The record gives the reactivity of an RNA of 177 nucleotides to DMS. For DMS the reverse transcriptase was MarathonRT. For DMS, 1,393 sequencing reads were counted. Values cover nucleotides 27 to 126.
[RMDB]
RNA sequence: GGGAACGACUCGAGUAGAGUCGAAAACGGUCUCUUCUCUUCUGUGUUCUUUCAAACUCACUUAGCCAGUGUUUUUGAUCCUGGUAAAGCCAGAGUCCUAAGAGAGAGAGAGUGAAAGUACUUGACAUCGAAGCCUAUAUUUCGAUAUAGGCUUCGAAAAAGAAACAACAACAACAAC
Reactivity to DMS in 0.01 (KOAc 150mM, MgCl2 10mM, bicine 150mM(pH8.5), 24C), signal-to-noise 2, nucleotides 027 to 126: c080g000g000u000c000u000c020u000u010c010u010c000u010u000c170u000g030u010g010u000u000c090u010u010u020c040a010a030a010c020u000c010a040c010u000u000a240g000c180c140a090g000u000g000u000u000u000u000u010g020a040u000c250c000u000g000g000u010a080a060a140g000c010c010a040g000a220g000u010c060c050u000a080a010g000a010g000a030g010a030g000a010g000a040g050u010g000a080a080a130g000u010a060c050u000u000g000a100c230a160